[RMDB]
RNA sequence: GGGAACGACUCGAGUAGAGUCGAAAAGCAGUCAAGGUACCGACGCCAUAAAUUCCAGCACCGAUUAAAAAGAGCUUCUUUUUACCAACUAUAUCCUGAAGCUUGGUACUUAAGAGCAUGAAUGAGGAUCCAUCACCGUAUUCGUACGGUGAUGGAUAAAAGAAACAACAACAACAAC
Reactivity to 2A3 in 0.01 (KOAc 150mM, MgCl2 10mM, bicine 150mM(pH8.5), 24C), signal-to-noise 4, nucleotides 027 to 126: g050c050a010g040u050c030a140a020g040g020u070a100c000c030g050a000c020g030c040c000a050u100a080a150a050u080u010c020c010a000g000c040a060c000c030g060a080u050u300a050a080a020a020a000g110a020g030c040u160u060c010u040u060u000u000u060a030c000c000a040a010c020u010a040u070a130u300c040c040u090g090a020a030g050c150u010u000g010g010u020a000c010u060u070a010a000g010a000g000c020a050u140g080a130a100u170g020a090g090g020
Reactivity to DMS in 0.01 (KOAc 150mM, MgCl2 10mM, bicine 150mM(pH8.5), 24C), signal-to-noise 3, nucleotides 027 to 126: g020c000a030g000u000c040a060a060g040g000u010a060c080c020g010a070c110g000c070c030a090u000a120a180a120u000u010c030c000a070g020c030a120c040c020g000a140u000u020a030a080a080a040a070g020a140g010c080u050u040c000u000u000u000u010u010a030c000c020a020a030c030u030a050u000a050u000c020c110u020g020a070a020g010c200u010u000g000g010u000a010c190u000u000a040a020g010a030g000c020a080u030g040a060a100u000g010a110g010g000
Annotation: Chemical mapping of a 177-nucleotide RNA with 2A3 and DMS. The 2A3 profile rests on 2,442 reads. 2A3 adducts were read by reverse transcription with SuperScript II with manganese. The DMS profile rests on 2,900 reads.